Source information:
Chemical mapping of a 177-nucleotide RNA with 2A3 and DMS. For DMS the reverse transcriptase was MarathonRT. The data come from the RNA Mapping Database (RMDB), library M2PK90. 2A3 adducts were read by reverse transcription with SuperScript II with manganese. For 2A3, 7,151 sequencing reads were counted. The reactions ran in a buffer of 150 mM KOAc, 10 mM MgCl2 and 150 mM bicine (pH 8.5), at 24 C.

RNA sequence: GGGAACGACUCGAGUAGAGUCGAAAAUGAAAUUAUCUAAGUGCCAGACCUUGUUGCGCGCUAACAAGGGCGCAUGGAGGAAGACAGAACCUCCAUACUGGCACAACCGCGAACCAAACAAAAAAAACAUGAUAAGUAAGUUCGCUUACUUAUCAUGAAAAGAAACAACAACAACAAC
Reactivity to 2A3 in 0.01 (KOAc 150mM, MgCl2 10mM, bicine 150mM(pH8.5), 24C), signal-to-noise 5, nucleotides 027 to 126: u090g010a020a030a050u290u170a100u130c090u090a180a060g010u000g000c010c000a000g020a080c010c000u000u010g030u000u030g040c250g020c030g030c140u030a010a000c020a000a010g010g030g000c080g010c020a000u000g010g000a000g010g000a140a020g100a090c090a060g120a100a070c000c000u000c000c000a010u020a030c010u000g000g000c000a010c000a000a010c010c010g070c030g050a030a030c040c020a050a070a050c130a050a090a030a010a000a000a010a010
Reactivity to DMS in 0.01 (KOAc 150mM, MgCl2 10mM, bicine 150mM(pH8.5), 24C), signal-to-noise 3, nucleotides 027 to 126: u000g000a050a120a110u020u000a060u000c110u010a090a100g020u000g000c000c000a040g020a160c010c010u000u000g000u000u010g000c100g020c130g000c090u000a040a010c040a000a010g010g010g020c270g010c170a020u000g000g010a010g000g010a080a050g010a110c300a090g010a180a090c000c000u010c000c010a010u000a070c050u000g010g010c010a010c000a040a100c130c030g000c100g020a080a110c090c100a080a090a070c090a040a010a010a040a040a060a060a180